[RMDB]
Conditions: 150 mM KOAc, 10 mM MgCl2 and 150 mM bicine (pH 8.5), 24 C. Chemical mapping of a 177-nucleotide RNA with 2A3 and DMS. It was measured as part of the RMDB library OK2TRN. For 2A3 the reverse transcriptase was SuperScript II with manganese.
RNA sequence: GGGAACGACUCGAGUAGAGUCGAAAAGCGCGGACGGUCUGUUGUCACGAAUCGUCGCGGCGGCUCACCCGCACUUGCAGUGCGUCAGCUUCGACUUGCCCGCGGUGACCGAGAUCGCUCGACGCAAAGCGAGGCAGAAGUUCGCUUCUGCCUCGCUAAAAGAAACAACAACAACAAC
Reactivity to 2A3 in 0.01 (KOAc 150mM, MgCl2 10mM, bicine 150mM(pH8.5), 24C), signal-to-noise 1, nucleotides 027 to 126: g000c000g050c000g010g030a010c000g010g020u020c020u000g110u090u080g010u120c010a010c070g050a050a060u130c030g050u050c010g040c000g080g000c000g000g020c010u020c020a020c000c060c130g000c000a090c120u110u300g070c060a030g020u010g000c000g030u000c010a090g000c010u080u050c000g020a080c030u070u300g090c010c070c060g110c030g090g010u000g000a010c000c000g030a010g000a020u020c010g010c010u060c030g100a150c000g010c060a110a010
Reactivity to DMS in 0.01 (KOAc 150mM, MgCl2 10mM, bicine 150mM(pH8.5), 24C), signal-to-noise 1, nucleotides 027 to 126: g040c060g030c030g010g040a010c020g010g030u000c010u000g010u000u010g070u000c060a030c040g000a210a110u030c210g010u010c030g000c070g020g010c000g020g000c010u000c030a070c090c070c110g030c060a200c200u000u010g030c150a120g030u000g020c050g010u010c060a140g030c030u010u000c050g010a050c010u000u020g010c090c040c060g040c040g000g020u000g020a010c000c180g000a020g000a060u000c040g020c000u000c020g040a090c030g020c020a070a090